[RMDB]
RNA sequence: GGGAACGACUCGAGUAGAGUCGAAAAUGGGAAACGCGCGUUUAAGCCUUCAACAAUUGUAACGAAAAAUGGUAUUCGUUAUGGAAUUAUUGGCGUAACGACACCAGAAACAAAGACGAAAACAAGAACAAAGAGUUGUUUUCGAACAACUCUUUGUAAAAGAAACAACAACAACAAC
Reactivity to DMS in 0.01 (KOAc 150mM, MgCl2 10mM, bicine 150mM(pH8.5), 24C), signal-to-noise 6, nucleotides 027 to 126: u020g020g020g000a080a080a050c160g000c040g000c030g020u000u000u010a050a090g000c010c000u000u010c070a060a090c180a060a080u020u010g040u010a020a020c050g010a000a010a090a090a140u020g030g020u050a100u010u000c000g020u000u000a010u000g000g020a100a120u010u020a110u010u000g010g020c020g000u020a020a010c020g010a080c170a080c020c000a030g010a090a080a110c140a060a050a090g000a120c110g000a080a030a070a070c120a050a070g010a090
Reactivity to 2A3 in 0.01 (KOAc 150mM, MgCl2 10mM, bicine 150mM(pH8.5), 24C), signal-to-noise 8, nucleotides 027 to 126: u090g010g010g060a050a090a060c070g120c010g000c020g010u000u010u060a080a020g020c000c020u060u100c060a100a090c030a060a130u100u110g040u050a020a020c030g070a030a010a020a050a110u260g080g060u180a220u030u020c010g000u000u000a010u040g090g090a060a050u110u040a050u090u150g060g000c020g010u010a020a000c000g010a000c010a010c010c010a010g090a060a070a010c100a060a090a040g130a050c080g120a030a050a060a050c110a080a030g110a100
An RNA of 177 nucleotides, treated with DMS and 2A3 and read out base by base. DMS adducts were read by reverse transcription with MarathonRT. The RNA was probed in 150 mM KOAc, 10 mM MgCl2 and 150 mM bicine (pH 8.5) at 24 C. For DMS, 12,415 sequencing reads were counted. It was measured as part of the RMDB library OK1LIB. For 2A3, 9,008 sequencing reads were counted. High 2A3 reactivity points to a flexible backbone, as in loops and unpaired stretches.